Source information:
The record gives the reactivity of an RNA of 177 nucleotides to 2A3 and DMS. Conditions: 150 mM KOAc, 10 mM MgCl2 and 150 mM bicine (pH 8.5), 24 C. Reactivities are given for positions 27 through 126. For 2A3, 682 sequencing reads were counted. For DMS the reverse transcriptase was MarathonRT.

RNA sequence: GGGAACGACUCGAGUAGAGUCGAAAAGAGCGUCGAGAGACGAAGAGAAGUGCAUCGAUCCACAACGGAGAACGUAAUAAUGCACGCAUGUGGGUUAGUGUCCGGAACAACGGGCACAAGAGGCAGAACGCCACCCAUAGUUCGCUAUGGGUGGCGUAAAAGAAACAACAACAACAAC
Reactivity to 2A3 in 0.01 (KOAc 150mM, MgCl2 10mM, bicine 150mM(pH8.5), 24C), signal-to-noise 1, nucleotides 027 to 126: g090a000g030c000g010u000c000g000a030g000a000g000a000c050g000a090a000g180a000g030a080a000g060u000g160c000a030u000c040g010a020u000c000c080a080c000a090a250c190g020g020a060g050a140a030c000g000u090a050a060u130a250a080u180g020c030a000c020g000c000a000u000g000u000g160g000g000u020u000a000g000u110g010u000c000c000g000g000a000a000c000a120a040c070g000g040g050c000a000c000a000a010g000a000g020g000c050a000g060a080
Reactivity to DMS in 0.01 (KOAc 150mM, MgCl2 10mM, bicine 150mM(pH8.5), 24C), signal-to-noise 2, nucleotides 027 to 126: g000a170g090c010g000u000c040g010a190g000a290g000a010c010g040a120a140g030a040g020a060a020g060u000g050c030a000u020c030g010a060u000c010c000a010c020a040a220c050g000g000a090g000a040a130c210g000u020a080a050u040a050a030u040g040c050a000c070g000c210a080u040g070u020g000g000g000u000u000a100g020u040g050u000c020c010g000g000a060a180c250a220a250c040g000g020g000c060a000c000a010a030g000a080g000g000c050a090g000a180